[RMDB]
RNA sequence: GGGAACGACUCGAGUAGAGUCGAAAACGAAGCCGCCCCCGGGCGCUCCCCUCGGAGAUCCACUGGGUGGGUUCACAUCCCCAACCCGCGGGCCGGCUGUUCUUCUUUCUCUUUCCUCGUCUUCCUCCUAGUACAUAUGCUUCGGCAUAUGUACUAGAAAAGAAACAACAACAACAAC
Reactivity to DMS in 0.01 (KOAc 150mM, MgCl2 10mM, bicine 150mM(pH8.5), 24C), signal-to-noise 2, nucleotides 027 to 126: c110g010a100a050g010c000c000g000c130c000c000c090c070g040g030g010c110g000c060u000c030c030c040c080u000c080g010g020a110g000a060u010c060c070a090c080u000g010g010g020u000g000g000g000u010u000c060a150c130a230u000c050c000c010c060a120a120c020c010c010g050c300g000g010g020c130c080g060g010c060u000g000u000u010c040u010u000c040u010u010u000c020u000c030u020u000u000c040c020u000c060g000u000c020u000u000c000c000u000c110